[RMDB]
RNA sequence: GGGAACGACUCGAGUAGAGUCGAAAAGAGCGUAAUCGCGUCUUGACGUGACUGGGAUAGCCUAGACUGUAGGCUAUCCCAAGUGUGCAUAGCGCACAUUACGCUGAUCAACAGUCAUAAAGAAAAACCUAAAUAUUACUUUCGAGUAAUAUUUAGGAAAAGAAACAACAACAACAAC
Reactivity to DMS in 0.01 (KOAc 150mM, MgCl2 10mM, bicine 150mM(pH8.5), 24C), signal-to-noise 6, nucleotides 027 to 126: g000a030g000c010g010u000a010a020u000c020g030c010g000u000c050u040u020g000a030c000g020u010g000a030c070u010g010g000g010a020u000a000g000c000c000u010a080g010a040c030u000g010u010a030g000g010c000u000a000u000c000c000c000a000a000g020u000g020u000g020c000a180u000a140g020c230g000c000a000c010a030u000u000a000c000g010c000u010g000a120u020c170a070a010c020a010g010u000c010a150u070a060a120a120g020a040a070a060a150a120
Reactivity to 2A3 in 0.01 (KOAc 150mM, MgCl2 10mM, bicine 150mM(pH8.5), 24C), signal-to-noise 9, nucleotides 027 to 126: g110a000g000c000g000u000a010a010u010c000g000c000g030u020c070u160u270g110a010c000g010u010g010a010c010u010g000g000g000a000u000a000g010c000c000u010a060g020a080c010u030g020u030a010g000g000c000u000a000u000c000c000c000a000a000g000u000g000u020g000c030a080u160a270g130c060g000c060a000c000a000u000u000a000c000g000c000u000g010a110u100c040a010a030c000a000g010u010c030a050u210a170a160a030g230a060a070a030a020a010